[RMDB]
RNA sequence: GGGAACGACUCGAGUAGAGUCGAAAAGGAGGACGAAGCAUAUUUCUGUUUCUGGAGGAUUAUUUAUAAUCUGCCGGAAAGUCUUGCAGGUGGCUGGGAUAUGUUCAGUCUGGUAGAAUUAAGCACUAAAACGUGUCCUUGUUCGCAAGGACACGAAGUAUAGGACCAAGUUCGCUUGGUCCUAUACAAAAGAAACAACAACAACAAC
Reactivity to 2A3 in 0.01 (KOAc 150mM, MgCl2 10mM, bicine 150mM(pH8.5), 24C), signal-to-noise 3, nucleotides 027 to 156: g040g030a000g000g000a000c030g010a000a000g010c030a030u020a040u080u100u090c070u110g130u060u060u020c040u050g010g020a060g020g000a010u020u000a020u010u240u030a090u040a060a020u030c020u080g100c000c000g000g020a040a000a000g030u030c060u140u130g050c050a020g030g100u040g020g030c020u030g030g000g000a010u030a000u080g090u120u080c030a010g010u010c040u000g020g020u060a010g060a090a050u150u120a050a030g030c060a020c100u110a020a040a070a010c010g000u010g000u000c000c000u020u000g020u040u020c110g010c120a000a000g020g000a000c000a000c000g000a000a000
Reactivity to DMS in 0.01 (KOAc 150mM, MgCl2 10mM, bicine 150mM(pH8.5), 24C), signal-to-noise 1, nucleotides 027 to 156: g000g000a160g000g010a070c070g000a130a170g060c000a040u000a060u000u000u010c000u000g010u000u000u020c010u000g070g020a030g000g000a050u000u000a020u000u000u000a090u000a060a000u010c010u010g000c010c000g020g000a030a030a080g010u010c030u000u000g020c090a120g000g020u000g000g060c010u000g010g000g010a030u000a030u000g020u010u000c080a190g020u000c030u000g000g000u010a050g010a150a090u000u000a040a120g040c060a090c010u000a040a050a120a150c040g010u000g000u000c000c010u000u000g020u000u000c280g020c010a030a000g000g000a020c020a000c010g010a000a060
Chemical mapping of a 207-nucleotide RNA with 2A3 and DMS. For 2A3, 1,563 sequencing reads were counted. DMS (dimethyl sulfate) methylates the pairing face of unpaired adenines and cytosines.